Chemical mapping of a 177-nucleotide RNA with 2A3 and DMS.
Values are in units of 0.01, from 0 to 300, in steps of 10.
Reactivities are given for positions 27 through 126.
It was measured as part of the RMDB library OK1LIB.
The RNA was probed in 150 mM KOAc, 10 mM MgCl2 and 150 mM bicine (pH 8.5) at 24 C.
For DMS the reverse transcriptase was MarathonRT.
For 2A3 the reverse transcriptase was SuperScript II with manganese.
RNA sequence: GGGAACGACUCGAGUAGAGUCGAAAAGUGGUCGAGUCCGAAGGACUGGGGUAGGGAAAUAAAGAGAGAGAGAGCUACCCCGUCUGUCAGUCACUCUCUGUCUGAGUCUCUCUCUCAAAGACCACAAAAUCACUACUCAUUUCGAUGAGUAGUGAUUAAAAGAAACAACAACAACAAC
Reactivity to 2A3 in 0.01 (KOAc 150mM, MgCl2 10mM, bicine 150mM(pH8.5), 24C), signal-to-noise 8, nucleotides 027 to 126: g020u010g000g000u010c010g030a050g070u010c020c020g080a100a050g060g010a010c050u080g010g010g000g020u030a020g030g040g100a030a090a040u220a070a200a010g070a000g000a000g000a000g000a000g000a000g000c010u010a020c010c000c010c010g020u030c010u020g040u020c030a020g010u040c030a050c110u120c030u010c040u050g040u050c040u030g020a030g030u000c000u000c000u000c000u000c000u000c000a030a020a000g000a000c010c010a020c030a030a130
Reactivity to DMS in 0.01 (KOAc 150mM, MgCl2 10mM, bicine 150mM(pH8.5), 24C), signal-to-noise 7, nucleotides 027 to 126: g020u000g000g010u000c000g000a080g010u000c020c010g000a190a120g000g010a070c020u020g010g000g000g010u000a010g000g010g010a070a080a090u050a030a080a060g010a030g010a010g000a020g000a020g000a210g020c020u000a010c010c010c010c020g010u010c050u030g010u010c070a040g010u010c110a100c120u010c070u020c050u000g000u000c020u000g000a200g000u000c000u010c000u000c000u000c000u000c000a050a040a100g000a010c010c010a010c030a060a060